[RMDB]
RNA sequence: GGGAACGACUCGAGUAGAGUCGAAAACUUAAUCUUGUUACCUUUUUCUUCAUUUUUUCUGUUAAACUUGAUUUUCACAGUCAGCAUUGAAGAAUUCAUCUUGUGGCCUGAAUUCAUUAAGAAAAGAUGUUAGGAUUUGUUCUGAAGAUAGUGACUACUAUAUUUAUCGCUUCGGCGAUAAAUAUAGAAAAGAAACAACAACAACAAC
Reactivity to 2A3 in 0.01 (KOAc 150mM, MgCl2 10mM, bicine 150mM(pH8.5), 24C), signal-to-noise 1, nucleotides 027 to 156: c010u070u070a060a030u200c120u000u070g090u160u250a200c000c000u000u020u040u020u080c000u000u000c000a090u000u100u030u030u020u000c020u080g110u110u180a060a140a000c000u090u120g050a090u100u140u090u170c060a000c000a020g000u000c000a010g080c110a080u060u060g040a090a030g010a120a120u150u120c040a070u040c040u030u100g060u040g020g050c000c000u000g010a040a100u080u030c000a020u050u100a100a000g020a050a020a000a000g000a000u010g020u100u020a000g030g030a040u000u000u090g020u050u030c040u070g050a020a020g040a040u070a020g060u070g050a040c010u050a020